[RMDB]
RNA sequence: GGGAACGACUCGAGUAGAGUCGAAAAUGUCUACAAAGUGUCAGAGCAGAGCAAUCUGCGAUGGCGUGCCUUUUGUUUAAUGAGUCUGCGAGUCAGUGUUUGUGGCAAGACUAAGGGCUUCCGGCCCCUAAGUCUACGUUUUCGAACGUAGACUUAGAAAAGAAACAACAACAACAAC
Reactivity to DMS in 0.01 (KOAc 150mM, MgCl2 10mM, bicine 150mM(pH8.5), 24C), signal-to-noise 9, nucleotides 027 to 126: u020g010u010c040u010a060c090a040a040a070g020u020g010u000c000a020g000a300g000c000a010g000a020g000c300a100a120u000c000u000g010c000g000a110u000g010g000c010g010u010g010c140c030u010u010u000u000g010u000u010u010a060a070u020g000a080g000u000c010u000g000c060g000a100g010u010c030a070g010u010g010u010u010u010g010u010g010g020c040a080a060g000a040c040u010a060a090g000g000g000c010u010u010c110c080g010g000c010c010c010
Reactivity to 2A3 in 0.01 (KOAc 150mM, MgCl2 10mM, bicine 150mM(pH8.5), 24C), signal-to-noise 9, nucleotides 027 to 126: u090g010u000c010u060a070c060a030a070a010g080u090g010u060c000a010g010a010g020c010a000g000a010g010c030a030a140u000c000u000g000c000g000a010u010g000g010c010g020u060g020c010c010u100u100u050u070g130u050u140u100a130a130u170g020a010g070u030c030u050g040c080g070a060g060u080c060a050g040u060g100u210u230u190g100u080g050g000c050a090a030g020a010c000u020a030a090g010g000g000c000u090u040c070c070g070g010c000c010c000
The record gives the reactivity of an RNA of 177 nucleotides to DMS and 2A3.
Conditions: 150 mM KOAc, 10 mM MgCl2 and 150 mM bicine (pH 8.5), 24 C.